The record gives the reactivity of an RNA of 177 nucleotides to DMS and 2A3. 2A3 adducts were read by reverse transcription with SuperScript II with manganese.
RNA sequence: GGGAACGACUCGAGUAGAGUCGAAAAUGACAGAUCACCCACAACUGGUUACGUUGAUGCCCAGGUCUGGAUUCUUGUAGUGGUCAUGAAUGAGGGCAUGAAUACACAUUCUCUAUAAUGCAUGUUAAAUGUCUUCUCAAUUCGUUGAGAAGACAUUAAAAGAAACAACAACAACAAC
Reactivity to DMS in 0.01 (KOAc 150mM, MgCl2 10mM, bicine 150mM(pH8.5), 24C), signal-to-noise 8, nucleotides 027 to 126: u000g010a180c050a050g000a050u000c040a130c030c020c020a120c070a060a080c040u000g010g020u010u010a080c170g020u000u010g010a080u000g010c040c020c040a090g000g000u000c040u010g000g010a160u000u000c060u000u000g020u010a070g030u000g010g000u000c020a040u000g000a060a060u010g010a110g010g000g010c020a010u000g010a050a070u000a080c110a060c060a090u000u000c040u000c050u010a090u010a060a060u010g010c100a050u010g000u000u000a070
Reactivity to 2A3 in 0.01 (KOAc 150mM, MgCl2 10mM, bicine 150mM(pH8.5), 24C), signal-to-noise 5, nucleotides 027 to 126: u090g020a010c020a030g080a050u050c030a060c010c010c020a030c020a050a050c030u120g140g120u230u180a050c080g050u050u100g050a120u070g000c000c000c030a020g000g010u010c030u030g070g080a120u090u050c050u040u180g100u110a110g040u020g090g010u030c010a020u050g070a080a040u110g010a110g020g000g000c030a000u020g040a030a030u140a020c060a000c000a080u080u020c040u000c010u060a090u090a250a170u170g090c090a020u050g050u120u140a070

About this RNA: The data come from the RNA Mapping Database (RMDB), library OK2TRN. For DMS the reverse transcriptase was MarathonRT. The reactions ran in a buffer of 150 mM KOAc, 10 mM MgCl2 and 150 mM bicine (pH 8.5), at 24 C. Reactivities are rounded to 0.1 and cut off at 0 and 3. The DMS profile rests on 14,020 reads. The 2A3 profile rests on 4,590 reads.